Source: RMDB library OK2TRN, as collected in RNAgym. This 177-nucleotide RNA was probed chemically with DMS. For DMS the reverse transcriptase was MarathonRT. Conditions: 150 mM KOAc, 10 mM MgCl2 and 150 mM bicine (pH 8.5), 24 C.

[RMDB]
RNA sequence: GGGAACGACUCGAGUAGAGUCGAAAAGGGUGAACGGCCCACUCGCGCGGCGGCUCGGCCUGCUCUUUGCCAUGGGCGCCACGCAGGGCUUUGUGGGCUGGUGGAUGGUGCGCAGUGGCCUCCAGGACAGAGUUGAUACGUUCGCGUAUCAACUCUGAAAAGAAACAACAACAACAAC
Reactivity to DMS in 0.01 (KOAc 150mM, MgCl2 10mM, bicine 150mM(pH8.5), 24C), signal-to-noise 3, nucleotides 027 to 126: g010g010g010u000g030a110a140c140g000g000c000c010c010a060c050u010c130g030c020g010c050g010g030c020g020g020c030u000c100g000g010c030c130u010g010c070u010c090u000u000u010g010c030c040a180u010g010g000g000c010g000c010c000a020c020g010c020a130g010g020g000c150u020u000u010g030u000g010g000g010c020u000g000g020u000g000g020a080u010g010g010u000g000c060g010c080a090g010u000g010g000c030c010u000c000c020a070g000g000a300
The DMS profile rests on 4,130 reads.